[RMDB]
Chemical mapping of a 177-nucleotide RNA with 2A3 and DMS. For 2A3, 17,497 sequencing reads were counted. In probing experiments dimethyl sulfate is read out at A N1 and C N3, which are open when not base-paired.
RNA sequence: GGGAACGACUCGAGUAGAGUCGAAAACGUUCUUUAGAGGGGACAAGCAUGAUCGCUUUAAGGGAGCUGGUAGAAAAGAUUGUAUCAGCAAAAAUGCAUGACGGACAGUUUGCAGAUUCUCCGAUAACAAUAGGUAUAGGUUCGCCUAUACCUAUUGAAAAGAAACAACAACAACAAC
Reactivity to 2A3 in 0.01 (KOAc 150mM, MgCl2 10mM, bicine 150mM(pH8.5), 24C), signal-to-noise 8, nucleotides 027 to 126: c010g020u030u000c020u030u110u110a100g020a050g050g030g010g010a010c020a050a010g020c020a070u110g040a110u180c050g030c070u070u050u110a050a030g060g030g000a050g010c010u010g060g000u030a040g090a100a110a070a020g140a050u120u220g040u050a020u020c010a010g000c010a030a060a040a020a030u060g000c030a010u100g040a030c020g000g050a020c020a060g020u040u050u060g010c010a020g020a140u080u020c030u000c010c020g050a040u080a130a030
Reactivity to DMS in 0.01 (KOAc 150mM, MgCl2 10mM, bicine 150mM(pH8.5), 24C), signal-to-noise 9, nucleotides 027 to 126: c100g010u000u000c010u000u000u000a070g020a180g010g010g010g010a060c180a070a090g010c050a070u000g010a070u000c100g000c030u000u000u000a090a080g010g010g010a180g010c010u000g010g010u000a020g000a060a070a120a130g010a130u000u010g010u000a040u000c020a020g020c030a010a050a030a070a090u000g000c020a040u000g020a050c060g010g010a090c140a080g010u000u010u000g010c040a040g000a150u000u000c030u010c010c050g010a120u010a060a160